Structure probing data (DMS and 2A3) for a 207-nucleotide construct.
Source: RMDB library OK3TST, as collected in RNAgym.
For 2A3 the reverse transcriptase was SuperScript II with manganese.
For DMS, 3,264 sequencing reads were counted.
RNA sequence: GGGAACGACUCGAGUAGAGUCGAAAAAUCUGUGUACCAACCACGUACCUUGAGUAUUAUGGACUUAAAAUUUUUUCUGGCUGGGCAUGGUAGCUCAUGCCUGUAAUCCCAGCACUUUGGGAAGCUGAGGUGGGCAGAUCACUUGGGGUUAGGAGUAAAAUUACGUCGUAUUCGUACGACGUAAUUUAAAAGAAACAACAACAACAAC
Reactivity to DMS in 0.01 (KOAc 150mM, MgCl2 10mM, bicine 150mM(pH8.5), 24C), signal-to-noise 1, nucleotides 027 to 156: a050u000c020u010g070u010g020u030a140c060c040a110a120c030c040a070c080g000u000a070c010c020u000u020g030a060g030u000a040u030u000a080u010g000g020a070c090u000u000a030a040a060a070u000u010u000u000u000u010c040u030g050g020c040u010g010g020g020c010a040u010g040g000u000a100g050c110u000c010a040u000g000c010c010u020g020u000a030a040u000c020c010c000a040g040c060a080c120u000u000u010g030g010g000a040a050g020c000u010g020a060g020g040u000g010g010g010c030a080g020a060u020c060a030c060u000u000g020g020g020g000u000u000a110g010g010a030g000u000a040
Reactivity to 2A3 in 0.01 (KOAc 150mM, MgCl2 10mM, bicine 150mM(pH8.5), 24C), signal-to-noise 2, nucleotides 027 to 156: a020u050c070u020g050u030g040u070a020c000c020a060a040c020c000a050c050g010u050a060c020c000u090u120g050a020g080u060a100u260u090a070u280g000g020a030c050u100u090a060a020a140a270u220u190u020u010u060u070c070u110g030g000c000u010g000g000g000c000a010u000g060g000u050a030g030c000u010c050a000u020g000c000c000u000g000u000a020a020u000c000c000c030a010g010c020a020c060u090u110u020g020g000g030a010a010g000c020u030g010a030g030g000u080g000g020g000c020a000g020a070u030c020a030c080u060u070g020g020g000g000u000u110a020g060g070a020g020u090a010
Conditions: 150 mM KOAc, 10 mM MgCl2 and 150 mM bicine (pH 8.5), 24 C.